[RMDB]
RNA sequence: GGGAACGACUCGAGUAGAGUCGAAAAGAAAGAAAGAAAGCGGUUGGGUGGGUCCAUCGACCGUCGUGGCGUAUUCGGACGCUUUACCACGACGCUAGGAAAUAGCGAGACCGACCACCCCCUUUAACAGAGGUAUAGUAGUUCGCUACUAUACCAAUCGCAUAUAUUCGUUCGCGAAUAUAUGCGAAAAAGAAACAACAACAACAAC
Reactivity to DMS in 0.01 (KOAc 150mM, MgCl2 10mM, bicine 150mM(pH8.5), 24C), signal-to-noise 1, nucleotides 027 to 156: g010a090a080a200g000a300a140a140g000a110a130a050g000c130g010g040u010u000g020g020g030u000g010g040g000u000c020c050a100u000c080g020a090c170c000g000u000c000g080u000g000g010c010g060u010a090u020u020c050g000g000a090c120g050c090u000u000u010a040c010c000a000c000g000a000c020g020c050u000a100g010g020a040a060a120u000a100g020c040g000a080g020a100c010c000g000a090c010c020a050c000c000c000c030c000u000u000u000a080a110c150a170g020a190g030g030u030a000u000a010g010u010a050g010u010u020c300g020c000u000a040c000u000a010u020a000c000c000a000a010
Reactivity to 2A3 in 0.01 (KOAc 150mM, MgCl2 10mM, bicine 150mM(pH8.5), 24C), signal-to-noise 2, nucleotides 027 to 156: g020a010a030a000g030a050a150a010g060a070a050a020g120c130g090g050u170u120g130g020g000u040g030g010g030u020c060c030a120u110c010g010a020c000c020g010u000c000g000u010g000g000c060g010u080a150u140u190c040g000g090a050c060g030c000u150u050u100a020c000c000a000c010g000a000c000g020c000u040a030g060g030a090a140a090u070a020g040c020g010a050g020a100c050c000g040a020c000c000a000c010c000c010c010c000u000u110u060a150a070c120a020g050a060g090g020u000a000u000a010g000u000a000g000u040u000c120g020c090u000a000c000u000a010u020a000c000c020a000a000
Annotation
The record gives the reactivity of an RNA of 207 nucleotides to DMS and 2A3. For 2A3 the reverse transcriptase was SuperScript II with manganese. In probing experiments dimethyl sulfate is read out at A N1 and C N3, which are open when not base-paired. The data come from the RNA Mapping Database (RMDB), library M2RFPK.